This 170-nucleotide RNA was probed chemically with DMS and 2A3.
In probing experiments dimethyl sulfate is read out at A N1 and C N3, which are open when not base-paired.
For DMS the reverse transcriptase was MarathonRT.
Conditions: 150 mM KOAc, 10 mM MgCl2 and 150 mM bicine (pH 8.5), 24 C.
The data come from the RNA Mapping Database (RMDB), library 15KLIB.
RNA sequence: GGGAACGACUCGAGUAGAGUCGAAAAGAGAAGCACUGUUACGACUUGUUACGUGACUGUGAUGCUGUAGCUCCCCAUGAUUUCUUCAUCUUUGAUGUAGACAAAGUUAAAACACCUCAUAUUGUACCCCGUUAUGAGUUCGCUCAUAACAAAAGAAACAACAACAACAAC
Reactivity to DMS in 0.01 (KOAc 150mM, MgCl2 10mM, bicine 150mM(pH8.5), 24C), signal-to-noise 9, nucleotides 027 to 129: g020a070g030a080a040g020c010a000c020u010g000u010u000a010c000g040a060c110u050u050g010u030u080a120c010g000u000g000a030c030u030g020u010g010a090u020g030c030u030g040u040a080g010c070u000c020c000c010c130a130u050g030a110u030u000u010c030u010u020c070a060u010c000u020u030u060g020a060u000g010u030a080g010a040c210a030a080a060g010u040u030a070a060a070a070c160a110c050c020u000c010a010u020a040u030u030g010u010a110c020c020c020c200
Reactivity to 2A3 in 0.01 (KOAc 150mM, MgCl2 10mM, bicine 150mM(pH8.5), 24C), signal-to-noise 9, nucleotides 027 to 129: g060a000g020a080a000g010c010a000c020u020g000u020u020a010c010g050a070c090u180u230g090u280u180a050c010g000u000g010a010c010u040g030u050g090a140u090g010c030u040g040u080a030g040c010u040c000c020c010c010a060u130g070a160u100u100u020c010u070u030c010a040u000c060u070u100u300g030a030u040g040u070a030g010a030c050a050a140a060g060u120u140a090a150a030a020c050a050c010c000u020c010a020u040a040u040u060g030u070a080c000c000c000c010